[RMDB]
RNA sequence: GGGAACGACUCGAGUAGAGUCGAAAAUGGGCCGUGUGCUUAACCAGGACAAGAUCUCCUUCUCUCCAACGUUGUUGCCAACUCAUGAUUCUCCUAACCUGUGCUUGGAGAGACGUGGACCCAGAGUACCACAGUAUUCAUUCGUGAAUACUGUGGUAAAAGAAACAACAACAACAAC
Reactivity to DMS in 0.01 (KOAc 150mM, MgCl2 10mM, bicine 150mM(pH8.5), 24C), signal-to-noise 4, nucleotides 027 to 126: u020g000g000g010c060c020g010u010g020u020g020c040u010u000a070a070c070c040a050g020g000a110c100a060a060g000a100u010c030u000c030c020u000u020c020u000c010u000c030c010a060a080c170g020u000u010g020u000u000g010c020c040a060a110c080u010c040a050u010g000a130u010u000c050u020c020c040u020a090a110c100c100u010g010u000g010c150u010u000g010g010a120g000a000g000a040c170g030u010g000g000a110c020c010c010a130g000a110g010u010
Reactivity to 2A3 in 0.01 (KOAc 150mM, MgCl2 10mM, bicine 150mM(pH8.5), 24C), signal-to-noise 4, nucleotides 027 to 126: u040g020g020g010c030c020g090u060g010u060g050c000u040u030a080a040c020c010a060g000g010a030c050a070a040g000a120u020c020u010c030c000u030u010c010u010c000u020c000c000a030a040c100g020u030u040g020u010u080g030c020c010a060a050c080u010c060a050u070g050a130u110u000c030u030c030c020u020a060a080c000c040u080g040u120g070c040u050u030g000g000a030g000a000g010a030c040g050u060g010g050a070c000c000c000a020g010a030g060u000